[RMDB]
RNA sequence: GGGAACGACUCGAGUAGAGUCGAAAAGCACAAGGCGUAUCUGAUCUUUCACAGAAGUUCAGCGCUAUGUCGAUUAUCGGCAUCACAGCACUUACAAACAUCACAAACAAAGCGAUAAAUGCCGGUAUGGCAUUCGCUAACUCGUUUACCAUGCAACAUACAAGUUGAUAUUCGUAUCAACUUGUAUAAAAGAAACAACAACAACAAC
Reactivity to 2A3 in 0.01 (KOAc 150mM, MgCl2 10mM, bicine 150mM(pH8.5), 24C), signal-to-noise 9, nucleotides 027 to 156: g030c020a030c040a090a050g060g000c040g040u080a100u110c030u020g040a030u010c030u020u170u130c180a130c040a170g100a100a010g030u030u040c060a010g010c020g010c080u040a020u020g020u000c020g020a030u080u100a050u150c000g020g000c020a010u060c040a030c050a040g040c030a030c070u130u220a050c120a050a140a030c030a100u190c090a040c070a160a090a030c060a100a180a010g010c020g020a030u090a120a140a000u030g000c000c010g020g070u180a170u170g020g000c000a010u020u010c000g000c000u020a050a030c020u020c060g030u030u060u070a110c020c010a060u140g070c040a080a050c010
Reactivity to DMS in 0.01 (KOAc 150mM, MgCl2 10mM, bicine 150mM(pH8.5), 24C), signal-to-noise 5, nucleotides 027 to 156: g020c020a080c030a070a120g030g040c040g020u000a090u000c030u000g010a100u000c040u000u010u010c100a170c170a140g010a080a090g000u000u010c060a050g000c040g040c060u010a050u000g020u010c030g040a300u000u010a080u000c020g010g000c010a030u010c060a110c130a090g030c000a040c040u000u000a290c080a130a090a070c060a120u010c080a110c110a090a080a080c090a060a110a050g010c020g000a120u000a040a070a030u010g010c000c000g030g030u000a030u010g010g020c010a020u000u000c010g010c040u010a050a040c060u000c050g020u000u000u000a070c060c020a070u010g020c030a070a120c120